Chemical mapping of a 177-nucleotide RNA with DMS. Reactivities are rounded to 0.1 and cut off at 0 and 3. DMS adducts were read by reverse transcription with MarathonRT. The reactions ran in a buffer of 150 mM KOAc, 10 mM MgCl2 and 150 mM bicine (pH 8.5), at 24 C.
RNA sequence: GGGAACGACUCGAGUAGAGUCGAAAAGAUAUGGAUCCAUCAAGCUCGAUAAGUAACACUCGGAAACGAGUGCUUACUUUUGACGAGCGACAUGGAUCCUAAGUCAAAACACCUGUUCGCAGGUGAACAAGUCGAUUGUCUUCGGACAAUCGACUUGAAAAGAAACAACAACAACAAC
Reactivity to DMS in 0.01 (KOAc 150mM, MgCl2 10mM, bicine 150mM(pH8.5), 24C), signal-to-noise 1, nucleotides 027 to 126: g000a020u010a300u000g000g000a020u000c000c000a000u000c050a140a300g000c000u000c000g010a160u000a050a020g000u000a000a000c000a000c010u000c000g000g000a090a140a220c040g000a010g010u030g000c280u020u000a010c000u000u020u000u000g000a160c090g010a000g020c020g050a290c300a030u000g000g000a010u000c000c000u000a010a170g000u000c160a160a090a200a130c000a010c000c010u000g000u000u020c260g010c050a000g000g020u000g020a130a070